[RMDB]
RNA sequence: GGGAACGACUCGAGUAGAGUCGAAAAGAUAUGGAUAUACUCCCCACCCUACCCACCCAAGUAAUCGGAAACGAUUAUUGGAGGGAGGUAUAUCCUAAGUCAAAAGCUCUGUGUUCGCACAGAGCAAGAAAAUAAUCGAGUUCGCUCGAUUAUUUUCAAAAGAAACAACAACAACAAC
Reactivity to DMS in 0.01 (KOAc 150mM, MgCl2 10mM, bicine 150mM(pH8.5), 24C), signal-to-noise 2, nucleotides 027 to 126: g000a040u010a170u000g000g000a000u010a000u010a010c010u000c040c000c010c170a270c270c090c110u000a170c110c100c080a200c200c000c010a010a000g000u000a000a010u000c020g010g000a060a030a050c000g000a000u000u000a000u000u000g010g000a150g010g000g010a000g000g000u010a000u000a000u000c000c000u000a010a110g000u000c030a090a090a150a110g000c000u000c020u010g030u000g010u000u010c220g000c010a000c000a000g000a000g020c000a030a030